RNA sequence: GGGAACGACUCGAGUAGAGUCGAAAAGAAAGAGAGAGAAGAAAUCCACUCAUGGAUCUCACUCCAUGGAAUGGGAAAGCCCUCCAUCUUACAAUGAGAUCAAGAGCCCCUCUGCUCCGAUAUUUGGUCAUACGGUCCUCUUCGGAGGACCGUAUGAAAAAGAAACAACAACAACAAC
Reactivity to DMS in 0.01 (KOAc 150mM, MgCl2 10mM, bicine 150mM(pH8.5), 24C), signal-to-noise 2, nucleotides 027 to 126: g010a090a040a030g000a110g010a150g000a050g000a020a080g010a100a090a040u030c050c020a060c060u040c020a020u010g000g000a010u000c050u010c160a070c110u000c160c150a020u000g000g030a040a060u030g000g030g000a180a110a120g000c080c060c000u020c070c090a080u000c080u000u000a140c120a110a120u030g000a020g020a120u020c020a030a110g000a020g020c030c000c030c010u040c070u000g000c030u000c000c060g010a120u020a010u010u000u030g000g010
Reactivity to 2A3 in 0.01 (KOAc 150mM, MgCl2 10mM, bicine 150mM(pH8.5), 24C), signal-to-noise 4, nucleotides 027 to 126: g070a000a100a010g050a000g030a000g020a000g040a120a020g040a070a070a050u020c050c000a060c030u050c010a020u060g030g020a020u040c020u050c230a060c100u040c030c000a000u030g010g080a040a090u090g010g010g050a100a070a110g090c010c000c010u070c010c000a090u050c060u050u020a060c080a100a180u090g040a070g010a070u060c070a100a020g020a010g050c020c010c000c000u040c050u070g060c020u030c000c010g040a020u020a120u110u140u090g080g040